Conditions: 150 mM KOAc, 10 mM MgCl2 and 150 mM bicine (pH 8.5), 24 C. This 177-nucleotide RNA was probed chemically with 2A3 and DMS. DMS adducts were read by reverse transcription with MarathonRT. Source: RMDB library OK2TRN, as collected in RNAgym. The DMS profile rests on 48,621 reads.

RNA sequence: GGGAACGACUCGAGUAGAGUCGAAAAACGCACAUGUGUGUCAUGUCGUGAUUGCGUACUGUCCUACAGUACGCAAACGGCUUCUGUAGGACAGAGGCCUCACGUAGUCGGAGACACUGAUUAGCGAGGUCAGCAUACUAUUCGUAGUGUGCUGACCAAAAGAAACAACAACAACAAC
Reactivity to 2A3 in 0.01 (KOAc 150mM, MgCl2 10mM, bicine 150mM(pH8.5), 24C), signal-to-noise 9, nucleotides 027 to 126: a000c010g000c000a010c010a030u070g020u000g000u010g060u030c010a030u060g050u070c000g000u010g010a070u010u060g000c010g000u010a010c000u010g040u150c040c010u060a030c000a000g000u000a000c010g000c000a010a000a000c030g010g000c000u000u000c000u010g040u040a080g040g160a010c000a000g010a000g000g000c000c000u000c000a000c000g020u020a020g090u060c080g050g010a030g010a000c010a000c010u010g020a070u040u060a020g010c010g010a020
Reactivity to DMS in 0.01 (KOAc 150mM, MgCl2 10mM, bicine 150mM(pH8.5), 24C), signal-to-noise 9, nucleotides 027 to 126: a100c020g010c010a100c050a030u000g010u000g020u000g010u000c000a070u000g010u000c000g020u000g000a160u000u000g010c000g020u000a020c000u000g010u000c170c110u000a110c000a000g010u000a000c030g010c000a000a010a100c180g010g000c010u000u000c000u000g000u000a110g010g040a300c010a010g000a020g010g000c000c050u000c010a000c000g010u000a070g010u010c140g000g010a160g000a020c030a020c010u000g000a100u010u000a080g010c020g000a140